Annotation: Chemical mapping of a 177-nucleotide RNA with 2A3 and DMS. For 2A3, 19,979 sequencing reads were counted. For DMS, 16,407 sequencing reads were counted. It was measured as part of the RMDB library OK2TRN. Reactivities are rounded to 0.1 and cut off at 0 and 3.
RNA sequence: GGGAACGACUCGAGUAGAGUCGAAAAGUGAUCGCCUCCUCGGCCGGCGGCUGGAUCACGGUGCGCAUGGCUUACUUCUUCAACGACAGCGCGUAGACCACCGAUGCCGGAUGCGCGCAUAGCUCGCGCAAUUAGGGAAGUUCGCUUCCCUAAUUGCAAAAGAAACAACAACAACAAC
Reactivity to 2A3 in 0.01 (KOAc 150mM, MgCl2 10mM, bicine 150mM(pH8.5), 24C), signal-to-noise 8, nucleotides 027 to 126: g030u020g030a050u050c020g020c010c010u030c010c010u050c040g110g040c040c030g020g020c040g010g020c030u070g080g010a040u060c020a020c080g000g030u070g010c040g000c040a090u090g050g000c010u070u060a100c010u080u090c010u100u120c060a110a060c050g080a030c020a040g000c010g000c010g020u010a030g070a220c010c010a030c030c070g180a130u200g100c070c020g010g000a010u020g000c000g000c000g000c020a040u090a070g020c030u020c020g010c010
Reactivity to DMS in 0.01 (KOAc 150mM, MgCl2 10mM, bicine 150mM(pH8.5), 24C), signal-to-noise 8, nucleotides 027 to 126: g020u000g000a050u000c040g010c040c020u000c030c030u000c080g020g020c070c080g000g010c100g000g000c040u000g020g020a050u000c050a060c050g010g020u000g010c050g010c050a050u010g010g010c050u000u000a090c110u000u000c050u000u000c090a070a110c080g000a070c100a100g010c020g010c020g010u000a040g000a120c050c020a090c080c090g000a120u010g020c100c060g000g000a130u000g010c010g010c030g010c020a070u010a090g010c070u000c030g010c240